Source: RMDB library OK3TST, as collected in RNAgym. Structure probing data (DMS and 2A3) for a 207-nucleotide construct. The reactions ran in a buffer of 150 mM KOAc, 10 mM MgCl2 and 150 mM bicine (pH 8.5), at 24 C. For 2A3 the reverse transcriptase was SuperScript II with manganese. The 2A3 profile rests on 3,571 reads. In probing experiments dimethyl sulfate is read out at A N1 and C N3, which are open when not base-paired.
RNA sequence: GGGAACGACUCGAGUAGAGUCGAAAAGUGAGUACACUCGUGAUCUCGAGAGAUCGUGAGAGUGAACGUACACACGUGAUCUCUCGAGUGUGUGAACGAGUACGAUCUCGUGUACGAACUCUCGUUCUCACGAUCGUGAACGUUCGAUCACGUUCACUGGGAGAUUUAUGUUCGCAUAAAUCUCCCAAAAAGAAACAACAACAACAAC
Reactivity to DMS in 0.01 (KOAc 150mM, MgCl2 10mM, bicine 150mM(pH8.5), 24C), signal-to-noise 3, nucleotides 027 to 156: g010u000g000a160g000u000a140c070a060c000u000c020g020u020g040a100u000c010u000c030g010a110g000a100g020a000u000c010g010u010g000a100g000a090g030u000g000a140a220c080g000u000a040c020a090c040a090c030g010u010g000a040u000c010u000c010u000c000g030a120g010u020g030u000g010u000g020a090a130c020g000a060g010u010a100c120g010a090u000c010u000c020g000u000g010u000a060c030g000a080a100c040u000c080u000c040g000u000u000c000u000c030a220c040g020a030u000c030g000u000g020a080a040c010g020u010u010c050g000a140u000c110a050c010g000u010u010c010a040c010
Reactivity to 2A3 in 0.01 (KOAc 150mM, MgCl2 10mM, bicine 150mM(pH8.5), 24C), signal-to-noise 4, nucleotides 027 to 156: g040u030g020a030g030u110a030c050a020c120u060c010g010u030g050a080u010c040u010c050g030a030g000a000g000a020u000c010g000u040g000a070g030a010g020u010g030a110a010c040g100u170a020c030a000c000a010c070g050u050g000a000u000c020u030c000u000c020g030a020g010u030g010u020g030u060g050a050a010c020g020a000g010u040a020c050g030a060u020c060u020c030g040u030g000u020a030c010g020a150a080c050u010c010u020c110g020u000u000c010u000c000a000c000g020a020u070c040g000u060g090a040a030c020g010u060u080c030g040a050u040c020a000c020g010u030u010c020a020c040